RNA sequence: GGGAACGACUCGAGUAGAGUCGAAAAUCAGGUUGGGCAGUCAGGGUCGGAGAAGGGCAAUGACUCAUUCUUAAAACCAGCGUUCUUAAGACCAAAGAGUCGGGCGGAAGGGGGGGAAAGCCCUCCGUCCGCAAGAAGAAUUCGUUCUUCUUGCGGAAAAAGAAACAACAACAACAAC
Reactivity to 2A3 in 0.01 (KOAc 150mM, MgCl2 10mM, bicine 150mM(pH8.5), 24C), signal-to-noise 9, nucleotides 027 to 126: u110c020a020g080g020u100u040g060g020g010c040a050g040u090c050a040g020g010g050u060c040g050g040a080g040a080a100g050g000g000c050a050a130u120g020a020c010u000c020a060u100u030c020u030u110a040a050a010a010c010c010a020g030c020g050u050u000c050u040u050a040a010g010a040c040c050a150a100a020g010a010g000u010c000g000g010g010c030g040g030a050a060g060g010g000g010g000g000g040a030a060a110g170c000c000c020u000c000c000g010
Reactivity to DMS in 0.01 (KOAc 150mM, MgCl2 10mM, bicine 150mM(pH8.5), 24C), signal-to-noise 9, nucleotides 027 to 126: u040c070a080g010g020u010u000g000g000g010c070a070g010u020c070a080g000g000g010u010c080g010g010a100g020a110a090g010g000g000c070a070a070u020g010a030c020u010c020a080u020u000c030u010u010a040a030a070a110c020c030a050g000c060g000u000u010c140u000u010a040a060g010a040c280c090a070a120a120g000a030g000u000c010g010g000g010c070g010g010a080a060g010g010g000g010g010g010g000a030a040a080g000c010c000c000u010c010c010g010
Record summary:
An RNA of 177 nucleotides, treated with 2A3 and DMS and read out base by base. DMS adducts were read by reverse transcription with MarathonRT. Reactivities are rounded to 0.1 and cut off at 0 and 3. It was measured as part of the RMDB library OK1LIB.